Chemical mapping of a 207-nucleotide RNA with DMS and 2A3. Conditions: 150 mM KOAc, 10 mM MgCl2 and 150 mM bicine (pH 8.5), 24 C.
[RMDB]
RNA sequence: GGGAACGACUCGAGUAGAGUCGAAAAUCCGAUUCGUCGGACAAUCAACCUUUGUGGGUAGAGGGAAGUGGAGGAAUGGGCCUCCCAUUGGGAGGCAUAUUCCGUUGAAACUUCCUACCCACCUACCCACUCUGGUAACUGGCGGGUUCGCCCGCAAAACGUACAUUUUGUUCGCAAAAUGUACGUUAAAAGAAACAACAACAACAAC
Reactivity to DMS in 0.01 (KOAc 150mM, MgCl2 10mM, bicine 150mM(pH8.5), 24C), signal-to-noise 2, nucleotides 027 to 156: u000c000c000g000a060u000u000c250g030u020c000g010g000a050c050a090a150u020c080a150a080c030c000u000u000u000g010u000g010g000g010u000a020g010a140g060g010g000a020a030g020u010g010g010a260g020g000a050a000u000g020g030g000c010c000u000c000c000c000a110u000u000g070g020g000a000g020g020c010a000u000a000u000u000c000c000g010u000u010g000a260a140a110c000u000u000c010c000u000a000c020c010c010a300c130c000u010a020c000c000c000a040c020u000c030u000g010g010u000a030a080c120u000g000g020c000g010g030g010u000u010c160g020c000c000c010g000c010a010a030
Reactivity to 2A3 in 0.01 (KOAc 150mM, MgCl2 10mM, bicine 150mM(pH8.5), 24C), signal-to-noise 4, nucleotides 027 to 156: u010c000c000g000a010u060u080c210g050u010c000g130g000a060c070a080a130u190c090a070a040c000c010u000u000u010g010u010g010g000g010u010a000g000a020g030g000g000a000a020g000u010g010g050a010g000g020a010a000u010g050g010g000c000c000u020c010c000c020a110u140u230g000g000g000a050g000g020c000a000u000a000u000u000c000c010g020u050u020g000a000a000a000c000u000u000c000c000u010a020c000c010c000a010c000c000u000a010c000c000c000a000c000u000c000u000g010g000u040a100a120c080u120g090g000c010g010g010g010u040u060c130g110c010c000c020g000c000a070a130
Source: RMDB library RNAMAK, as collected in RNAgym. DMS (dimethyl sulfate) methylates the pairing face of unpaired adenines and cytosines.